This 177-nucleotide RNA was probed chemically with DMS and 2A3. DMS adducts were read by reverse transcription with MarathonRT. The DMS profile rests on 847 reads. Reactivities are given for positions 27 through 126. The RNA was probed in 150 mM KOAc, 10 mM MgCl2 and 150 mM bicine (pH 8.5) at 24 C. For 2A3, 1,068 sequencing reads were counted. Source: RMDB library RFM100, as collected in RNAgym.
[RMDB]
RNA sequence: GGGAACGACUCGAGUAGAGUCGAAAAAGAACCACAGAAAAAUCGACAGCAAUGACAAGCAUUGACAUUAACAACUUACAAAAUACCUUUCAACAAGCUAUGAAUAUGAGCGGCUCCCCAGGCGCUGCGAACUGACUCCAUUCGUGGAGUCAGUUCGAAAAGAAACAACAACAACAAC
Reactivity to DMS in 0.01 (KOAc 150mM, MgCl2 10mM, bicine 150mM(pH8.5), 24C), signal-to-noise 1, nucleotides 027 to 126: a000g000a010a090c030c240a100c180a070g010a050a060a000a140a010u070c060g000a130c080a150g000c080a010a180u000g000a150c040a120a080g000c010a030u000u000g000a080c070a160u020u050a000a120c200a080a010c150u010u000a000c020a000a030a010a060u040a120c140c000u000u020u040c010a080a060c300a060a050g000c010u000a130u000g000a090a030u000a080u100g000a110g000c000g050g000c030u000c070c000c000c070a070g000g000c180g040c030u030g010
Reactivity to 2A3 in 0.01 (KOAc 150mM, MgCl2 10mM, bicine 150mM(pH8.5), 24C), signal-to-noise 2, nucleotides 027 to 126: a000g110a030a020c020c010a040c050a040g220a050a060a010a000a010u040c040g060a000c080a080g000c010a040a090u040g020a140c020a040a020g040c000a080u000u040g040a040c020a020u060u210a110a030c070a060a060c020u090u080a020c060a040a060a080a030u060a110c000c000u010u060u040c040a100a060c040a000a110g000c020u060a050u100g030a170a070u160a060u180g020a070g040c000g000g060c000u020c000c080c000c000a030g070g060c030g010c040u060g000